Chemical mapping of a 177-nucleotide RNA with 2A3 and DMS. The reactions ran in a buffer of 150 mM KOAc, 10 mM MgCl2 and 150 mM bicine (pH 8.5), at 24 C. High DMS reactivity at an A or C suggests that its Watson-Crick edge is free. For DMS, 4,336 sequencing reads were counted. The 2A3 profile rests on 2,594 reads. 2A3 adducts were read by reverse transcription with SuperScript II with manganese.

[RMDB]
RNA sequence: GGGAACGACUCGAGUAGAGUCGAAAAUUGGUAUGCCUUUAACAUUUGUAUAGUUUGGUUUGCUUAAAACACCUUAAAACCAAUGACAGCUCCAGCACUGCAGAAUUGGUGUGAUUCUACUUUGGAAAUCAUAUUCUGGGUUCGCCCAGAAUAUGAUAAAAGAAACAACAACAACAAC
Reactivity to 2A3 in 0.01 (KOAc 150mM, MgCl2 10mM, bicine 150mM(pH8.5), 24C), signal-to-noise 3, nucleotides 027 to 126: u050u040g020g020u020a030u080g030c010c020u110u100u070a030a030c030a130u120u100u120g160u060a190u070a220g040u020u070u040g020g000u040u040u060g030c030u110u090a040a080a080a040c030a040c010c000u020u060a140a180a030a030c020c020a030a010u060g050a070c040a030g000c010u050c050c000a020g030c070a010c040u010g010c050a020g020a190a090u060u090g020g000u040g030u030g030a000u050u000c010u030a080c030u040u040u030g050g060a070a210
Reactivity to DMS in 0.01 (KOAc 150mM, MgCl2 10mM, bicine 150mM(pH8.5), 24C), signal-to-noise 4, nucleotides 027 to 126: u000u000g020g020u010a040u010g010c020c020u000u000u000a080a070c040a140u000u010u010g020u010a110u010a070g010u000u000u000g000g010u000u010u010g030c100u000u010a040a060a080a070c080a070c060c060u000u010a050a070a070a060c030c030a030a040u010g000a090c100a060g010c040u010c040c070a050g020c080a090c060u000g000c080a070g010a110a070u000u010g010g010u000g010u000g010a060u000u000c010u000a060c050u000u000u000g030g010a080a100